An RNA of 177 nucleotides, treated with 2A3 and DMS and read out base by base. For DMS the reverse transcriptase was MarathonRT. Source: RMDB library OK2TRN, as collected in RNAgym. For 2A3 the reverse transcriptase was SuperScript II with manganese. The reactions ran in a buffer of 150 mM KOAc, 10 mM MgCl2 and 150 mM bicine (pH 8.5), at 24 C.

RNA sequence: GGGAACGACUCGAGUAGAGUCGAAAACGUUAAAGUGACGCCGGGCACGAAACAUGUAGAGGAGAGACCCAAGGUUCAAGUGAUUCAGGCGGCCGACCCUAUGGCCACCGCGUACUUGUGCGCUAUCGCUCAUCUGUGUAUUCGUACACAGAUGAGCAAAAGAAACAACAACAACAAC
Reactivity to 2A3 in 0.01 (KOAc 150mM, MgCl2 10mM, bicine 150mM(pH8.5), 24C), signal-to-noise 2, nucleotides 027 to 126: c040g020u050u090a190a050a040g040u060g070a040c050g040c090c040g020g070g100c020a030c060g100a080a090a010c050a070u120g030u140a010g010a030g140g040a040g000a010g030a030c000c080c000a030a030g090g000u050u020c020a030a040g000u010g100a100u100u120c020a000g000g000c000g030g010c030c010g080a110c030c000c010u060a120u170g020g000c030c000a010c000c030g020c010g000u010a070c030u080u040g030u030g050c090g020c050u040a070u280c070
Reactivity to DMS in 0.01 (KOAc 150mM, MgCl2 10mM, bicine 150mM(pH8.5), 24C), signal-to-noise 3, nucleotides 027 to 126: c090g020u000u000a090a100a140g020u000g000a060c090g020c050c060g000g000g010c030a060c040g010a110a060a080c070a040u000g020u010a090g010a070g000g000a090g010a090g010a100c050c030c050a080a090g020g000u010u000c050a030a080g000u000g000a110u010u010c060a120g010g020c010g000g000c010c020g020a050c070c050c120u000a040u010g000g000c030c010a010c020c040g020c160g010u000a020c020u000u010g000u000g000c030g010c080u000a100u000c160